[RMDB]
RNA sequence: GGGAACGACUCGAGUAGAGUCGAAAAAUCAGAGGGCGCUAUCAUGCAAACUAGGAUUGUCUGCUCAUGCACAGAACCAACUACCGAUAAGUAACAGUGCAUGAAGGUUAGUUAUUCCAUAUUAAUUAAAACUCGUAAUUCUUCGGAAUUACGAGAACAACAGGGACACGUUCGCGUGUCCCUGUUGAAAAGAAACAACAACAACAAC
Reactivity to 2A3 in 0.01 (KOAc 150mM, MgCl2 10mM, bicine 150mM(pH8.5), 24C), signal-to-noise 2, nucleotides 027 to 156: a000u060c070a050g040a070g030g010g030c030g010c080u120a090u210c020a040u260g060c090a010a010a070c040u070a010g000g070a040u070u010g010u010c000u000g060c000u000c000a020u000g000c000a010c030a020g050a120a060c070c040a040a010c020u150a090c010c080g130a100u060a180a000g040u000a100a000c010a090g000u000g010c000a000u000g030a010a060g000g000u030u080a030g000u020u040a060u100u050c000c000a020u050a040u300u100a080a050u040u110a060a060a050a080c000u000c000g000u000a000a000u000u010c000u000u040c190g040g000a000a000u000u000a010c000g000a000g000a000a000
Reactivity to DMS in 0.01 (KOAc 150mM, MgCl2 10mM, bicine 150mM(pH8.5), 24C), signal-to-noise 1, nucleotides 027 to 156: a120u000c020a040g000a140g070g030g000c270g020c030u010a170u000c160a180u000g010c070a070a150a110c040u000a180g020g000a130u000u000g050u000c050u000g030c040u010c020a020u000g000c000a030c000a050g000a070a180c050c030a100a050c120u000a300c140c000g020a190u000a050a160g000u000a050a080c040a070g000u000g010c000a060u000g000a060a190g000g000u000u010a070g040u020u000a140u000u010c010c010a150u010a100u040u000a030a180u000u000a030a060a130a240c000u000c000g000u000a000a000u000u000c000u010u010c280g030g010a010a020u000u000a010c000g000a010g030a030a090